[RMDB]
RNA sequence: GGGAACGACUCGAGUAGAGUCGAAAAAAAGUUCUCUCCUCCCUGCACCCCCGUUGCUGCUCCCCUCAAAAGGGCCUCUUAUCCCUUUUCCCUGGUGGAGUCUUCCUACUAUCGGGCUUUGAGCACUGACCACUAGAUAGUUCGCUAUCUAGUGGUCAAAAGAAACAACAACAACAAC
Reactivity to DMS in 0.01 (KOAc 150mM, MgCl2 10mM, bicine 150mM(pH8.5), 24C), signal-to-noise 2, nucleotides 027 to 126: a040a050a140g000u010u020c010u000c010u000c040c020u000c010c030c000u020g010c080a090c050c000c000c010c010g020u020u000g020c100u000g000c010u010c030c060c010c000u030c070a030a040a110a100g020g010g030c110c020u000c080u020u010a210u010c010c010c010u000u000u000u010c030c000c000u000g000g060u020g010g020a060g000u020c020u000u000c020c030u010a050c170u000a050u000c070g000g010g010c060u010u020u000g020a090g000c050a120c100u000
Reactivity to 2A3 in 0.01 (KOAc 150mM, MgCl2 10mM, bicine 150mM(pH8.5), 24C), signal-to-noise 4, nucleotides 027 to 126: a000a000a000g050u040u000c000u000c010u020c020c000u000c020c000c000u020g010c020a040c000c020c000c000c010g060u030u060g020c010u000g010c000u020c000c000c000c010u050c040a070a060a020a010g020g010g000c020c000u070c020u030u060a080u100c000c000c010u020u020u060u050c020c010c010u040g000g040u040g060g020a010g010u000c000u010u030c010c000u020a080c020u030a070u160c040g040g010g010c010u070u050u100g060a040g020c050a050c110u040

Background
Chemical mapping of a 177-nucleotide RNA with DMS and 2A3. Conditions: 150 mM KOAc, 10 mM MgCl2 and 150 mM bicine (pH 8.5), 24 C. The 2A3 profile rests on 3,799 reads.